This 177-nucleotide RNA was probed chemically with DMS and 2A3. The DMS profile rests on 813 reads. Conditions: 150 mM KOAc, 10 mM MgCl2 and 150 mM bicine (pH 8.5), 24 C. Values are in units of 0.01, from 0 to 300, in steps of 10. The data come from the RNA Mapping Database (RMDB), library M2PK50.

[RMDB]
RNA sequence: GGGAACGACUCGAGUAGAGUCGAAAAACCUGAUGAUUCGUCAUCAGGUCACAUGCCGCCCGAACGGCUUCCUGACCGGGCGGAUUCACUUUAUAUGGAGCACUGCUGCAUCAUUCGUGAUGCAGAAGAUCCUCUUCCCGUUCGCGGGAAGAGGAUCAAAAGAAACAACAACAACAAC
Reactivity to DMS in 0.01 (KOAc 150mM, MgCl2 10mM, bicine 150mM(pH8.5), 24C), signal-to-noise 1, nucleotides 027 to 126: a020c000c000u090g000a020u000g030a040u000u000c140g010u000c010a000u000c020a010g010g020u000c050a040c080a080u000g000c010c010g010c010c010c010g010a070a200c160g000g010c070u010u010c090c010u010g020a150c200c020g020g020g000c000g000g010a000u010u020c100a060c160u020u000u000a060u010a070u020g030g000a050g000c070a150c160u000g030c000u000g000c000a020u000c000a070u000u020c200g010u000g000a010u000g010c000a000g000a120a090
Reactivity to 2A3 in 0.01 (KOAc 150mM, MgCl2 10mM, bicine 150mM(pH8.5), 24C), signal-to-noise 2, nucleotides 027 to 126: a000c000c000u000g000a010u020g000a000u010u070c150g060u000c100a010u000c000a000g000g000u020c010a070c010a080u190g010c000c000g020c030c010c010g010a030a020c090g070g050c000u210u200c010c020u030g020a010c040c000g010g000g010c040g000g000a000u090u060c030a010c060u160u280u140a230u090a110u300g020g010a010g000c010a020c070u180g000c010u010g000c000a000u000c000a030u010u100c140g130u070g010a000u000g000c000a010g000a000a010